Structure probing data (DMS and 2A3) for a 177-nucleotide construct. Values cover nucleotides 27 to 126.
RNA sequence: GGGAACGACUCGAGUAGAGUCGAAAAAGUGACAGCUUUCGAGCUGUCACUAAUAGGGGUUGAAGCGGACACCCCUUCAGGCGCGCGCCCAAGCUCCGUAUACCAUGCCGGACUUCGGUCCGGCAUGCUAUCUGUAAGUCUUCGGACUUACAGAUAGAAAAGAAACAACAACAACAAC
Reactivity to DMS in 0.01 (KOAc 150mM, MgCl2 10mM, bicine 150mM(pH8.5), 24C), signal-to-noise 3, nucleotides 027 to 126: a030g020u000g000a020c000a000g010c000u000u010u000c200g000a030g020c000u000g010u000c010a000c000u000a020a050u000a060g010g020g000g010u010u010g010a160a120g010c030g020g010a080c060a040c010c010c010c010u000u000c140a070g020g000c070g020c160g010c150g030c010c000c120a050a050g010c130u000c000c010g020u000a160u010a070c300c010a010u010g010c010c000g000g000a020c000u000u020c180g030g000u000c010c000g000g010c000a000u000g020
Reactivity to 2A3 in 0.01 (KOAc 150mM, MgCl2 10mM, bicine 150mM(pH8.5), 24C), signal-to-noise 2, nucleotides 027 to 126: a000g000u000g000a010c000a010g010c010u060u100u200c170g030a010g000c000u000g000u000c010a000c000u000a000a010u100a000g000g010g010g010u030u090g210a210a030g040c000g020g000a000c000a010c000c030c000c000u000u100c060a010g010g000c020g010c030g030c020g020c090c010c020a010a000g020c080u000c000c000g010u020a070u050a080c030c000a000u000g000c010c010g000g000a020c010u050u050c220g030g020u010c000c000g000g000c010a000u000g000